RNA sequence: GGGAACGACUCGAGUAGAGUCGAAAAGCUCGGUGACACCGCGUCUGCCUGGGUCCGAAAGAUUUCUUGUCGCAAAUCUACAAGACAUUGGUUAACGUGUGGGCCGCUUGAGCGGCCGCUCGGCGGGAGUUGGGAUGGUGUUCGCGCCGUUCCAACUAAAAGAAACAACAACAACAAC
Reactivity to 2A3 in 0.01 (KOAc 150mM, MgCl2 10mM, bicine 150mM(pH8.5), 24C), signal-to-noise 7, nucleotides 027 to 126: g010c010u010c020g030g030u050g040a030c020a010c060c010g010c010g030u010c040u050g010c000c010u020g070g000g020u000c000c010g050a090a060a010g020a010u010u030u000c020u040u130g120u110c050g010c080a010a020a080u030c010u020a020c030a060a010g020a010c010a030u020u070g040g010u060u110a030a010c010g000u010g010u110g050g070g000c000c000g000c010u090u160g020a020g030c000g000g020c010c010g000c010u010c010g060g000c000g000g020g010
Reactivity to DMS in 0.01 (KOAc 150mM, MgCl2 10mM, bicine 150mM(pH8.5), 24C), signal-to-noise 5, nucleotides 027 to 126: g000c020u000c030g010g010u010g000a100c090a080c040c020g000c020g000u000c050u010g000c020c000u010g020g000g000u010c010c020g000a110a120a040g000a030u000u010u010c040u020u040g010u010c150g010c170a030a030a060u020c020u010a030c120a130a090g000a020c050a050u020u010g000g000u010u020a060a110c060g010u010g010u010g000g010g020c010c000g010c010u020u020g010a050g010c010g000g010c030c030g000c010u010c010g000g010c020g000g000g000

Annotation: An RNA of 177 nucleotides, treated with 2A3 and DMS and read out base by base. For 2A3 the reverse transcriptase was SuperScript II with manganese.